[RMDB]
RNA sequence: GGGAACGACUCGAGUAGAGUCGAAAACGGCGGCCACCCAGGCCGCUGGAUCGGCCGGUGUGGGCGCAUCGACGCACCGGACCGCGUUGAACGCGUCCUGGUCGUUGCUGUAGUGCCCGUCUGCAUCUCUGUUCCUGGGAUUCGUCCCAGGAACAGAAAAAGAAACAACAACAACAAC
Reactivity to DMS in 0.01 (KOAc 150mM, MgCl2 10mM, bicine 150mM(pH8.5), 24C), signal-to-noise 2, nucleotides 027 to 126: c030g030g050c000g000g020c000c030a060c080c060c080a190g030g020c050c000g030c000u000g000g020a080u000c060g000g000c020c060g000g000u010g020u010g010g010g020c050g020c020a050u020c000g020a030c010g010c090a050c020c020g010g010a030c060c080g070c080g040u000u040g020a160a240c070g030c060g020u000c010c020u000g010g000u010c100g010u000u000g000c070u000g020u000a100g010u020g000c050c010c000g000u000c050u000g000c100a060u010c060
Reactivity to 2A3 in 0.01 (KOAc 150mM, MgCl2 10mM, bicine 150mM(pH8.5), 24C), signal-to-noise 2, nucleotides 027 to 126: c010g030g020c000g010g040c020c010a060c020c040c020a050g040g000c000c010g010c020u010g010g020a120u080c000g040g000c030c000g050g100u090g020u060g060g140g030c030g000c010a040u060c010g020a010c010g000c020a010c000c030g050g010a080c040c110g000c030g020u050u150g120a230a070c020g000c000g010u000c000c030u080g000g000u000c000g000u010u010g000c080u100g060u170a140g010u000g060c000c020c000g020u030c030u050g050c010a100u040c020